[RMDB]
RNA sequence: GGGAACGACUCGAGUAGAGUCGAAAAUAUUAACCCAUGCAUGUGCCAGUUCAGUAUUGAACAGCGAAACUGCGAAUGGCUCAUUAAAACAGUUAUAGUUUAUUUGAUAAUUAAAGAUUACAUGGAUAACCGAGCUAAUUGUUGGGCUAAUACAUGCGGUAAAAGAUAGGUUCGCCUAUCUUUUACCAAAAGAAACAACAACAACAAC
Reactivity to DMS in 0.01 (KOAc 150mM, MgCl2 10mM, bicine 150mM(pH8.5), 24C), signal-to-noise 2, nucleotides 027 to 156: u010a090u010u000a130a140c020c010c000a050u010g020c020a080u000g040u010g020c010c020a130g010u000u000c040a110g010u020a140u010u000g000a030a020c050a110g000c020g000a110a080a090c010u000g010c010g000a190a150u000g000g010c010u000c010a090u000u010a030a160a180a050c000a050g000u010u010a120u000a160g000u010u000u000a040u030u010u000g000a200u000a100a090u000u000a120a050a130g000a140u020u000a030c020a070u020g000g010a090u000a090a110c090c030g010a050g080c000u000a040a050u000u000g020u000u000g000g000g000c050u000a060a070u000a020c070a080u020g010c290
Reactivity to 2A3 in 0.01 (KOAc 150mM, MgCl2 10mM, bicine 150mM(pH8.5), 24C), signal-to-noise 2, nucleotides 027 to 156: u150a040u090u140a010a030c010c000c010a020u090g050c050a030u020g000u060g020c020c020a030g020u010u030c020a010g050u110a300u210u190g050a120a100c020a010g020c020g110a080a060a040c020u080g010c010g100a090a060u080g000g000c000u030c020a030u020u140a000a080a070a050c000a000g050u070u100a080u050a060g000u040u170u050a140u090u090u030g060a050u090a250a050u190u090a150a160a020g040a010u020u080a090c050a060u140g030g010a030u070a070a070c100c100g020a020g010c000u020a080a100u050u000g010u010u010g050g000g000c050u030a070a020u100a080c040a060u010g040c020
Overview:
The data come from the RNA Mapping Database (RMDB), library PDB130. An RNA of 207 nucleotides, treated with DMS and 2A3 and read out base by base. The 2A3 profile rests on 823 reads.